Structure probing data (DMS and 2A3) for a 177-nucleotide construct. The RNA was probed in 150 mM KOAc, 10 mM MgCl2 and 150 mM bicine (pH 8.5) at 24 C. Reactivities are given for positions 27 through 126. For DMS, 3,810 sequencing reads were counted. For 2A3 the reverse transcriptase was SuperScript II with manganese.
RNA sequence: GGGAACGACUCGAGUAGAGUCGAAAAACGAUUUAUGUGAUUAUUUUAAAGAGAAACAGAUUAAACAUGUAUAUGUUUCAGACUUAUUAAGAACACAGCAAACGUUUGAACAUAUUUUUCCAUAUGAUGAUCCUCAAUGAUUCGUCAUUGAGGAUCAAAAAGAAACAACAACAACAAC
Reactivity to DMS in 0.01 (KOAc 150mM, MgCl2 10mM, bicine 150mM(pH8.5), 24C), signal-to-noise 3, nucleotides 027 to 126: a010c000g000a080u000u000u030a050u000g000u000g000a050u000u010a080u000u000u010u000a000a000a050g010a300g000a000a010a010c030a010g010a070u000u020a140a120a180c220a110u040g000u040a040u020a020u020g000u000u010u000c010a060g000a150c050u000u000a050u010u030a010a040g010a080a070c000a010c000a010g010c110a000a030a030c010g010u000u000u000g000a100a090c190a090u010a050u000u010u010u000u000c040c000a130u040a070u010g010a190
Reactivity to 2A3 in 0.01 (KOAc 150mM, MgCl2 10mM, bicine 150mM(pH8.5), 24C), signal-to-noise 3, nucleotides 027 to 126: a000c010g120a110u000u020u000a050u010g030u000g030a140u050u050a030u060u090u050u130a050a030a000g060a030g000a000a000a000c000a020g090a040u110u190a200a230a030c090a100u200g130u190a100u030a030u130g020u010u000u010c020a020g060a050c010u050u010a000u060u080a180a000g050a100a000c000a000c000a010g120c050a070a010a000c000g000u010u010u080g040a070a010c080a030u130a140u030u060u000u040u050c010c080a060u020a090u170g090a060
For DMS the reverse transcriptase was MarathonRT.